[RMDB]
RNA sequence: GGGAACGACUCGAGUAGAGUCGAAAAGGUCCUCGCUUCGGCGAGGACCAGAGCACCACUCCUGCGGGAGUUAAGGCCAAACGGACAGCCGGCUGCAAAGCCAAUUGUUUAAGUUCGCUUAAACAAAUUCGAUAGACGAAUUCGUUCGUCUAUCGAAAAAAGAAACAACAACAACAAC
Reactivity to DMS in 0.01 (KOAc 150mM, MgCl2 10mM, bicine 150mM(pH8.5), 24C), signal-to-noise 1, nucleotides 027 to 126: g010g020u000c050c020u000c020g000c010u000u000c170g020g000c030g030a030g010g010a000c000c000a010g010a130g010c120a100c020c180a020c030u000c000c010u000g020c160g000g000g030a040g020u000u020a040a060g010g010c010c040a020a090a160c170g010g010a030c100a120g000c170c070g030g010c030u000g020c140a070a120a040g000c000c010a070a180u000u000g010u000u000u000a020a020g010u010u010c200g000c010u010u010a000a010a010c000a010a040a220